[RMDB]
RNA sequence: GGGAACGACUCGAGUAGAGUCGAAAACCUCACUACAUUUUACUGUUCCUAAAGAAUUUGUGACAGGUACAGUAAAACGUAUUGCAAGGUUUAUCAGUUCCUAUAAACAGGUAAUUAACAAUAUAUGAAAAGCAAAGACUGUUCGCAGUCUUUGCAACUUGGCGUGUUAGUUCGCUAACACGCCAAGAAAAGAAACAACAACAACAAC
Reactivity to 2A3 in 0.01 (KOAc 150mM, MgCl2 10mM, bicine 150mM(pH8.5), 24C), signal-to-noise 2, nucleotides 027 to 156: c000c010u050c000a010c020u040a010c000a010u020u010u000u000a010c000u010g000u000u050c030c000u040a070a180a010g140a300a300u250u230u280g150u100g080a090c010a010g010g000u000a000c000a000g020u000a000a000a000a000c010g020u010a000u000u010g030c010a030a020g020g040u000u090u070a140u100c000a030g000u000u030c000c010u030a040u190a130a120a000c040a030g040g040u110a150a120u170u140a050a100c070a030a070u150a030u080a050u190g180a060a060a070a070g000c000a000a000a010g000a000c000u040g000u010u050c160g000c070a000g000u000c000u000u000u000g010c010a000a000